Structure probing data (2A3 and DMS) for a 177-nucleotide construct. Reactivities are given for positions 27 through 126.
[RMDB]
RNA sequence: GGGAACGACUCGAGUAGAGUCGAAAAGGGCGUCAUUUCGAUGACGCCCAUACGUCUACUCCGAUUGGCGAGGACGACGCGGACGGGCGCGUUUGCCAAUCGCACCGUCCAGAUUCGUCUGGACGAAAAUGCCGAGGUAGUUCGCUACCUCGGCAUUAAAAGAAACAACAACAACAAC
Reactivity to 2A3 in 0.01 (KOAc 150mM, MgCl2 10mM, bicine 150mM(pH8.5), 24C), signal-to-noise 1, nucleotides 027 to 126: g010g000g010c030g020u010c020a020u060u070u160c220g090a030u030g000a000c000g000c010c000c000a010u000a000c010g040u000c000u010a010c020u010c020c000g020a010u030u040g010g000c040g030a080g040g110a050c010g010a130c000g010c010g050g150a150c110g030g100g150c010g000c020g000u030u030u070g030c000c010a010a010u000c000g010c010a050c020c050g000u000c000c000a000g000a020u050u040c040g030u000c090u000g000g020a000c010g000a040a060
Reactivity to DMS in 0.01 (KOAc 150mM, MgCl2 10mM, bicine 150mM(pH8.5), 24C), signal-to-noise 1, nucleotides 027 to 126: g010g010g010c000g040u000c010a000u000u000u010c240g010a000u000g010a020c010g020c020c000c000a070u000a010c200g000u000c010u000a010c000u000c050c040g020a030u010u000g000g000c020g000a140g050g020a050c120g010a060c020g000c000g000g000a180c250g000g000g000c010g000c050g000u000u010u010g010c030c020a020a000u000c010g000c060a050c130c000g040u000c000c000a000g000a040u000u010c160g000u000c010u000g000g000a020c010g000a020a010
Source information:
The data come from the RNA Mapping Database (RMDB), library M2PK50. For 2A3 the reverse transcriptase was SuperScript II with manganese.